This 207-nucleotide RNA was probed chemically with DMS and 2A3.
Reactivities are rounded to 0.1 and cut off at 0 and 3.
In probing experiments dimethyl sulfate is read out at A N1 and C N3, which are open when not base-paired.
For DMS the reverse transcriptase was MarathonRT.
For 2A3 the reverse transcriptase was SuperScript II with manganese.
[RMDB]
RNA sequence: GGGAACGACUCGAGUAGAGUCGAAAAGGUAAUAACGAAUAGGAUGACCUUAGUACCUCCACAUAACAUAAUAACAAAAGGUCACAAUGGGCAAUCCGCAGCCAAGCUCCCAUAUGUUGGGAGAAGGUUCAGAGACUAUAAUCGGAUGGGCGCAAGCGUGUUGUACUGAGUUCGCUCAGUACAACACAAAAGAAACAACAACAACAAC
Reactivity to DMS in 0.01 (KOAc 150mM, MgCl2 10mM, bicine 150mM(pH8.5), 24C), signal-to-noise 1, nucleotides 027 to 156: g040g030u000a030a090u000a030a170c070g050a120a170u000a100g040g020a090u000g010a060c000c020u040u000a210g040u000a020c020c020u000c010c010a100c090a130u020a070a130c090a160u000a070a060u010a050a140c080a110a070a090a070g010g010u000c020a010c080a140a120u020g020g020g000c000a080a050u000c050c000g020c090a110g030c000c010a030a140g020c010u010c000c040c000a060u000a060u010g000u010u030g020g090g000a050g000a050a070g020g000u000u000c050a110g000a070g020a090c010u010a050u000a050a120u000c050g000g020a070u010g000g010g000c050g010c080a080a070g000c130
Reactivity to 2A3 in 0.01 (KOAc 150mM, MgCl2 10mM, bicine 150mM(pH8.5), 24C), signal-to-noise 4, nucleotides 027 to 156: g040g020u080a050a070u120a200a060c100g040a060a060u100a130g080g060a060u020g010a040c000c000u020u010a030g050u050a050c010c010u050c070c050a100c020a040u220a210a030c030a060u250a250a050u130a190a010c070a100a110a050a000g010g000u030c020a010c040a060a110u090g010g060g040c000a010a040u000c010c040g000c070a010g000c000c010a020a090g030c000u010c000c010c020a020u090a050u240g230u110u070g000g010g000a010g000a000a020g000g000u030u050c030a010g030a000g020a090c060u080a080u110a300a070u060c010g010g000a000u020g060g160g000c010g020c030a030a030g070c030
For 2A3, 1,907 sequencing reads were counted. The RNA was probed in 150 mM KOAc, 10 mM MgCl2 and 150 mM bicine (pH 8.5) at 24 C. It was measured as part of the RMDB library ARCHII.